[RMDB]
RNA sequence: GGGAACGACUCGAGUAGAGUCGAAAAAGAGAAGAAAAUUAGUGGCGAAACGUACGGUUUAUGUCAAAGGAGAAGGUGAUUUUAAUUGCACCUGAAGCAACCCUAGGUCUUCCCUUUGAUGUGAGCUAAUAAGGAGUAACCGAUUCUUACAAUGUGAGUUAGAUUGAGAGUUCGCUCUCAAUCUAACAAAAGAAACAACAACAACAAC
Reactivity to 2A3 in 0.01 (KOAc 150mM, MgCl2 10mM, bicine 150mM(pH8.5), 24C), signal-to-noise 4, nucleotides 027 to 156: a000g090a030g020a080a010g040a030a100a060a100u250u200a130g060u120g080g000c020g000a010a010a010c000g020u000a000c010g010g000u000u000u000a000u010g000u010c000a000a000a000g040g030a230g010a090a030g000g020u030g040a100u060u050u120u270a190a210u110u160g000c000a020c020c060u040g020a030a000g000c040a030a050c020c050c070u080a070g070g000u040c000u010u000c000c000c000u000u010u000g000a000u000g010u000g000a010g000c000u000a000a000u020a020a000g010g000a000g000u000a000a000c000c000g000a010u020u000c000u000u030a070c060a120a120u120g060u030g090a060
Reactivity to DMS in 0.01 (KOAc 150mM, MgCl2 10mM, bicine 150mM(pH8.5), 24C), signal-to-noise 1, nucleotides 027 to 156: a090g000a140g030a060a030g000a070a100a110a080u010u000a100g020u000g010g040c000g000a150a120a270c010g000u020a090c180g010g000u010u000u000a010u000g010u000c040a060a050a040g030g010a230g000a080a040g040g050u000g010a130u000u030u000u000a030a140u000u010g040c010a060c100c060u010g010a080a170g000c020a100a040c040c030c120u010a040g010g050u000c010u000u000c020c010c020u010u010u020g000a080u000g020u000g030a050g050c010u000a040a050u020a060a150g000g000a070g020u000a080a020c010c030g010a140u000u000c000u000u000a120c040a060a150u020g030u010g020a210

Source information:
An RNA of 207 nucleotides, treated with 2A3 and DMS and read out base by base. The DMS profile rests on 2,136 reads. The reactions ran in a buffer of 150 mM KOAc, 10 mM MgCl2 and 150 mM bicine (pH 8.5), at 24 C.